[RMDB]
RNA sequence: GGGAACGACUCGAGUAGAGUCGAAAAACCUUAUUUUGAGAAGCUGAGGGAUUUGGCCCAUAGAAGCUUCAGCAACCGACUGUAAAUAGCACGGUGCUAAUACCAACGAGCAACUCGAAUGAUAAGUAAAACGUUGACAAGUUCGCUUGUCAACGAACAUGUAUAUAUCCUUCGGGAUAUAUACAUGAAAAGAAACAACAACAACAAC
Reactivity to DMS in 0.01 (KOAc 150mM, MgCl2 10mM, bicine 150mM(pH8.5), 24C), signal-to-noise 2, nucleotides 027 to 156: a160c020c010u010u040a110u000u000u000u000g020a100g000a080a270g010c090u000g000a150g000g000g010a110u000u000u010g030g000c000c010c000a140u000a180g020a150a080g000c020u000u010c000a020g000c000a010a010c010c000g000a070c010u020g000u020a080a100a210u010a030g020c010a070c030g000g010u010g010c000u010a010a070u000a030c060c000a060a120c070g030a170g040c050a040a220c020u000c010g020a080a070u000g000a130u000a040a110g010u010a060a060a080a120c010g000u000u000g000a000c000a020a010g020u010u010c300g040c010u010u010g010u010c000a020a010c000g010a030a030
Reactivity to 2A3 in 0.01 (KOAc 150mM, MgCl2 10mM, bicine 150mM(pH8.5), 24C), signal-to-noise 4, nucleotides 027 to 156: a000c060c000u120u100a260u050u120u120u110g100a060g000a010a000g010c010u030g000a020g010g000g040a040u040u040u030g030g000c010c010c020a040u130a130g050a060a000g010c000u020u020c000a000g000c010a020a080c010c020g040a020c030u020g040u290a110a110a190u100a150g020c020a020c040g010g010u000g000c000u010a000a010u030a050c010c000a040a030c040g070a030g040c080a040a120c050u040c100g070a070a060u070g080a060u050a150a020g070u100a090a080a020a050c010g000u000u000g000a010c000a010a000g000u030u080c130g050c190u000u010g000u000c000a000a000c000g000a000a000
An RNA of 207 nucleotides, treated with DMS and 2A3 and read out base by base. 2A3 is a SHAPE reagent: it acylates the 2'-hydroxyl of flexible nucleotides of all four kinds. For 2A3 the reverse transcriptase was SuperScript II with manganese.